The record gives the reactivity of an RNA of 177 nucleotides to DMS and 2A3. Source: RMDB library OK2TRN, as collected in RNAgym. For 2A3 the reverse transcriptase was SuperScript II with manganese. For 2A3, 1,362 sequencing reads were counted. The RNA was probed in 150 mM KOAc, 10 mM MgCl2 and 150 mM bicine (pH 8.5) at 24 C.
[RMDB]
RNA sequence: GGGAACGACUCGAGUAGAGUCGAAAAUUAAUUUUAUUAGAUGCCAUCUAAUUUUUUCUACCACCCAGUCUGGCAUGAACUCAACAUAAUAGGAUGACCUACCAUCAAUCAUAGGAACAAGUGUGAAAUGGACUAAUUUAUUCGUAAAUUAGUCCAUAAAAGAAACAACAACAACAAC
Reactivity to DMS in 0.01 (KOAc 150mM, MgCl2 10mM, bicine 150mM(pH8.5), 24C), signal-to-noise 4, nucleotides 027 to 126: u010u020a110a070u020u010u010u030a080u000u000a100g010a080u000g010c140c110a130u010c040u000a030a010u000u000u000u000u010u000c060u020a100c090c050a090c030c030c040a080g010u010c070u000g000g020c030a050u000g000a060a090c080u000c060a040a060c070a050u010a050a100u000a070g010g010a100u000g010a080c070c020u000a080c100c040a070u000c080a050a090u000c080a080u010a080g010g000a090a080c080a070a050g020u000g000u010g020a060a080
Reactivity to 2A3 in 0.01 (KOAc 150mM, MgCl2 10mM, bicine 150mM(pH8.5), 24C), signal-to-noise 2, nucleotides 027 to 126: u010u010a000a020u020u030u110u290a050u010u110a070g000a150u140g210c060c040a010u070c060u050a030a060u020u000u000u000u040u140c060u110a080c000c060a020c050c030c000a020g040u000c040u010g030g000c010a000u040g010a070a060c060u080c090a030a040c000a110u210a240a120u080a160g090g050a050u060g050a020c020c010u000a100c100c020a010u050c010a030a110u060c020a040u040a100g050g030a030a020c020a200a080g030u080g020u030g240a110a120